[RMDB]
RNA sequence: GGGAACGACUCGAGUAGAGUCGAAAAGUGCUCCUUGGGUCCGGUGAUCGCCAGCCAGCCGGCCCGGUAUCCGGCGACGCGGUAGGCCUUCGACAGCCCAUUGAAGGUCAGGCACAACAUAUCCGGGGAUAGCAUUGCUGUUCGCAGCAAUGCUAUCAAAAGAAACAACAACAACAAC
Reactivity to 2A3 in 0.01 (KOAc 150mM, MgCl2 10mM, bicine 150mM(pH8.5), 24C), signal-to-noise 5, nucleotides 027 to 126: g060u060g010c030u020c030c010u080u100g050g000g030u060c050c040g010g030u080g040a080u070c040g030c040c010a030g000c010c000a000g010c010c010g010g010c000c020c000g010g000u090a070u020c010c000g020g020c030g020a070c050g020c000g030g020u070a060g040g000c000c000u000u010c000g040a030c030a050g040c000c010c000a010u010u060g020a010a000g020g010u020c030a020g040g040c040a010c010a140a060c030a090u140a050u070c010c000g050g000g000
Reactivity to DMS in 0.01 (KOAc 150mM, MgCl2 10mM, bicine 150mM(pH8.5), 24C), signal-to-noise 3, nucleotides 027 to 126: g000u020g020c030u000c010c030u000u040g000g000g010u020c040c050g000g000u030g010a080u030c140g020c010c020a160g040c030c050a300g020c000c010g020g010c010c050c000g020g000u010a030u000c010c000g020g010c040g000a070c200g020c050g000g020u030a100g000g000c000c000u000u000c000g000a040c140a140g000c000c020c020a300u010u020g000a010a010g030g010u010c010a080g010g010c010a060c050a090a140c200a070u020a060u000c010c000g030g020g020
Chemical mapping of a 177-nucleotide RNA with 2A3 and DMS. Reactivities are given for positions 27 through 126. DMS adducts were read by reverse transcription with MarathonRT. Reactivities are rounded to 0.1 and cut off at 0 and 3. The reactions ran in a buffer of 150 mM KOAc, 10 mM MgCl2 and 150 mM bicine (pH 8.5), at 24 C. Source: RMDB library OK1LIB, as collected in RNAgym.